[RMDB]
RNA sequence: GGGAACGACUCGAGUAGAGUCGAAAAGGGGUCUUAGGGAGCGUCAUCGAUCUAAGAGGAGCUCUGAAGCCUCCACGGAGCGCCGGUGAAAUACUCUUAGGGAGACGCGUUGAUCUAAGACGGAGGCACCCAAAAGCAGCAAGUUCGCUUGCUGCAACAUAUCAUCAAUCUUCGGAUUGAUGAUAUGAAAAGAAACAACAACAACAAC
Reactivity to 2A3 in 0.01 (KOAc 150mM, MgCl2 10mM, bicine 150mM(pH8.5), 24C), signal-to-noise 5, nucleotides 027 to 156: g110g010g010g000u000c000u010u000a000g000g000g000a020g010c000g000u010c010a080u300c030g000a000u000c000u000a000a000g000a010g020g010a040g010c010u000c000u000g000a040a020g000c000c000u000c000c000a020c020g030g000a010g030c030g010c080c170g050g150u300g170a110a080a030u090a030c000u000c000u000u000a000g010g000g000a030g010a000c000g000c010g070u070u000g000a000u000c000u000a000a010g000a000c010g000g000a000g000g000c010a040c000c000c000a050a120a010a040g000c000a000g000c000a000a000g010u080u160c190g040c200u000u000g000c000u000g000c000a000a000
Reactivity to DMS in 0.01 (KOAc 150mM, MgCl2 10mM, bicine 150mM(pH8.5), 24C), signal-to-noise 2, nucleotides 027 to 156: g000g020g020g070u010c010u000u010a040g000g000g000a010g020c020g040u000c000a200u000c120g010a050u010c040u000a010a030g010a100g030g010a090g020c010u000c010u000g000a090a140g000c020c000u010c010c020a300c050g010g010a020g010c040g090c170c080g000g020u000g000a140a060a130u000a050c000u000c000u000u000a040g000g020g000a070g010a020c000g050c000g010u000u000g000a060u000c010u000a030a040g010a020c000g020g020a020g030g060c040a150c000c000c030a070a080a100a270g010c000a020g010c010a030a040g030u000u020c300g040c010u010u000g000c010u000g010c010a020a100